[RMDB]
RNA sequence: GGGAACGACUCGAGUAGAGUCGAAAAGAUAAGCUAGCAGCAAAAAGGAACCGAUUCCCACCAAGUUCGGAAAGAGAUAUCGGGCGAGGCGCUGAAGAAAGAAUCUCGCUUCAGACACCCCAAGGACAUGACCUUAAAAUGUUCGCAUUUUAAGGAAGUAGCAGAACUACUUCGGUAGUUCUGCUACAAAAGAAACAACAACAACAAC
Reactivity to 2A3 in 0.01 (KOAc 150mM, MgCl2 10mM, bicine 150mM(pH8.5), 24C), signal-to-noise 1, nucleotides 027 to 156: g010a030u100a020a090g030c060u120a030g010c080a030g050c010a040a000a180a110a000g100g010a040a030c020c010g030a040u000u050c060c070c010a030c020c060a070a080g060u070u040c070g000g030a120a050a000g090a010g000a010u030a010u110c050g010g030g020c050g030a020g020g040c060g000c100u010g000a020a000g050a100a300a000g050a110a110u020c010u030c080g050c000u030u000c030a030g050a030c020a080c040c000c000c010a000a040g050g000a010c010a110u120g110a090c000c000u000u000a000a000a000a010u010g000u040u090c160g030c080a000u010u000u000u010a000a000g000g000a000a020